Chemical mapping of a 207-nucleotide RNA with DMS and 2A3.
The RNA was probed in 150 mM KOAc, 10 mM MgCl2 and 150 mM bicine (pH 8.5) at 24 C.
2A3 adducts were read by reverse transcription with SuperScript II with manganese.
[RMDB]
RNA sequence: GGGAACGACUCGAGUAGAGUCGAAAAACGGUCGUACGCGACCGAGGCGCGGCUAGGACGACGGACCGAACAAUGGCAUCCCGCAUUCUGCCAUCCGCCGCGCAGCUUCUUCUCAAACGGUGCGGAAAAAAGUAGGACACCUUCGGGUGUCCUACAACUAUGAUAUCGCGUUCGCGCGAUAUCAUAGAAAAGAAACAACAACAACAAC
Reactivity to DMS in 0.01 (KOAc 150mM, MgCl2 10mM, bicine 150mM(pH8.5), 24C), signal-to-noise 1, nucleotides 027 to 156: a080c000g000g010u020c010g080u000a060c180g080c000g030a010c010c020g000a040g000g000c000g000c040g000g000c020u020a260g030g010a140c010g010a100c150g050g000a300c030c000g000a170a070c250a110a060u010g040g040c050a170u020c090c000c030g020c070a160u010u010c040u040g000c000c000a130u010c040c050g040c000c000g000c040g020c020a000g020c030u000u010c070u000u000c020u000c030a130a060a100c090g030g040u000g000c020g000g010a000a040a070a120a100a090g000u000a010g000g010a000c000a000c000c020u010u010c300g010g050g060u000g040u000c000c020u000a000c000a010a090
Reactivity to 2A3 in 0.01 (KOAc 150mM, MgCl2 10mM, bicine 150mM(pH8.5), 24C), signal-to-noise 2, nucleotides 027 to 156: a000c020g000g010u010c000g030u060a050c240g000c000g120a000c000c000g000a030g010g010c010g000c010g010g010c000u010a010g010g000a020c110g050a040c160g130g190a020c020c000g000a000a010c010a010a010u000g000g000c010a030u090c010c020c000g010c010a020u300u090c020u040g000c000c000a000u000c010c020g000c000c000g000c010g000c000a000g000c010u100u100c010u070u000c020u020c030a100a090a040c050g000g000u000g000c000g000g000a050a020a020a070a010a000g000u000a000g000g010a000c000a010c000c020u040u100c240g040g000g000u000g000u000c000c000u000a000c000a000a000